The record gives the reactivity of an RNA of 177 nucleotides to DMS and 2A3.
Source: RMDB library TTRDES, as collected in RNAgym.
As a SHAPE reagent, 2A3 marks flexible, mostly unpaired nucleotides at the ribose 2'-OH.

RNA sequence: GGGAACGACUCGAGUAGAGUCGAAAAGAUAUGGAGAUCGAUUAGGGAGAGAGCAUUCGGAAACGAAUGCAUCUCGACGAUCUAAUUCGAUCUCCUAAGUCAAAACGUUUCAGUUCGCUGAAACGAACUAUAGACCAGGGUUCGCCCUGGUCUAUAGAAAAGAAACAACAACAACAAC
Reactivity to DMS in 0.01 (KOAc 150mM, MgCl2 10mM, bicine 150mM(pH8.5), 24C), signal-to-noise 3, nucleotides 027 to 126: g010a040u010a300u010g030g000a020g010a000u000c000g010a050u000u000a010g010g010g000a010g020a010g000a130g000c000a010u000u010c000g000g020a100a060a190c010g010a020a010u000g010c010a030u000c000u000c000g000a100c280g010a040u000c000u000a000a020u020u000c000g000a010u000c000u000c000c000u000a000a120g010u000c070a090a110a100a210c040g010u000u000u000c010a010g020u000u010c280g030c030u000g000a000a020a000c000g000a050a090
Reactivity to 2A3 in 0.01 (KOAc 150mM, MgCl2 10mM, bicine 150mM(pH8.5), 24C), signal-to-noise 2, nucleotides 027 to 126: g030a010u060a060u180g010g000a020g000a010u010c000g000a000u010u010a020g010g010g000a030g000a000g000a010g080c000a010u010u000c000g040g010a050a080a060c010g030a010a000u000g000c000a220u000c010u010c010g040a040c000g010a000u020c000u000a000a020u250u220c000g020a000u000c010u060c000c000u000a030a000g000u010c010a000a040a090a140c010g000u000u010u010c020a040g000u040u110c300g060c190u000g000a010a010a010c010g010a060a020

The 2A3 profile rests on 3,891 reads.